The record gives the reactivity of an RNA of 177 nucleotides to DMS and 2A3.
The 2A3 profile rests on 3,223 reads.
Values are in units of 0.01, from 0 to 300, in steps of 10.
For DMS, 1,754 sequencing reads were counted.
Source: RMDB library M2PK50, as collected in RNAgym.
The RNA was probed in 150 mM KOAc, 10 mM MgCl2 and 150 mM bicine (pH 8.5) at 24 C.
RNA sequence: GGGAACGACUCGAGUAGAGUCGAAAAGGUCCGCUGUUCGCAGCGGACCAAAUAAAAUCAGCGGUAUCGAGGCGUAAAAUAUUACCGCUGAACGGCUCGAUAAAACCGUGCCGUUCGCGGCACGGAACGUAAGGGCAUAGUUCGCUAUGCCCUUACGAAAAGAAACAACAACAACAAC
Reactivity to DMS in 0.01 (KOAc 150mM, MgCl2 10mM, bicine 150mM(pH8.5), 24C), signal-to-noise 2, nucleotides 027 to 126: g020g010u000c000c000g030c010u000g010u010u020c160g000c020a010g050c000g000g000a010c000c000a000a000a040u010a060a040a110a100u000c000a020g020c020g000g000u000a050u010c070g000a060g000g020c070g000u020a050a050a090a100u010a110u000u000a040c000c010g000c000u000g010a000a040c030g000g000c000u000c060g010a120u030a040a080a070a130c020c000g020u000g010c000c000g000u010u010c230g020c000g000g000c040a020c000g030g010a060a040
Reactivity to 2A3 in 0.01 (KOAc 150mM, MgCl2 10mM, bicine 150mM(pH8.5), 24C), signal-to-noise 2, nucleotides 027 to 126: g020g000u000c000c020g000c010u000g030u020u040c220g000c080a000g040c000g000g000a000c000c000a000a010a000u020a000a010a000a040u030c000a010g010c020g000g030u010a020u060c050g040a070g130g050c110g080u120a040a070a080a050u220a090u100u060a020c000c000g020c010u000g000a020a010c000g020g000c000u000c010g030a070u100a140a090a030a030c020c000g000u000g030c010c000g000u020u050c230g000c040g050g000c020a010c000g000g000a010a020